An RNA of 177 nucleotides, treated with 2A3 and DMS and read out base by base.
RNA sequence: GGGAACGACUCGAGUAGAGUCGAAAAUUGCAAAAAAGCUAAGCCGGCGGGCAGAGGAAAACGCCUGUAGCCGGCGAGUGAAGACGAACCAUCGACUGCCGUGUUCCUUUUCCUCUUGGAGGUUGGACACCAACCAAGUUUUCGAACUUGGUUGGUGAAAAGAAACAACAACAACAAC
Reactivity to 2A3 in 0.01 (KOAc 150mM, MgCl2 10mM, bicine 150mM(pH8.5), 24C), signal-to-noise 2, nucleotides 027 to 126: u090u030g070c030a030a020a060a000a220a070g030c020u090a210a040g040c000c010g000g010c010g010g040g030c010a020g020a150g110g100a030a170a070a070c120g080c000c000u160g050u090a020g010c000c000g050g000c020g000a000g000u090g040a040a040g090a050c040g020a040a030c050c010a030u040c030g020a030c020u010g030c000c000g030u000g020u090u050c010c000u010u080u030u020c030c050u060c000u000u140g100g000a000g040g020u020u020g030g050a030
Reactivity to DMS in 0.01 (KOAc 150mM, MgCl2 10mM, bicine 150mM(pH8.5), 24C), signal-to-noise 2, nucleotides 027 to 126: u030u020g010c100a000a000a080a090a120a270g000c000u000a080a090g000c000c000g020g060c000g010g000g000c000a020g010a220g020g020a130a100a120a050c280g010c050c020u030g010u050a190g000c010c000g010g000c000g000a000g010u010g000a120a050g000a110c070g010a060a030c120c050a090u000c060g060a010c050u010g010c040c050g000u000g000u000u010c000c000u000u070u000u000c000c040u000c060u010u040g020g020a010g000g020u000u000g020g000a150
In probing experiments dimethyl sulfate is read out at A N1 and C N3, which are open when not base-paired.
Values cover nucleotides 27 to 126.
The reactions ran in a buffer of 150 mM KOAc, 10 mM MgCl2 and 150 mM bicine (pH 8.5), at 24 C.
The 2A3 profile rests on 726 reads.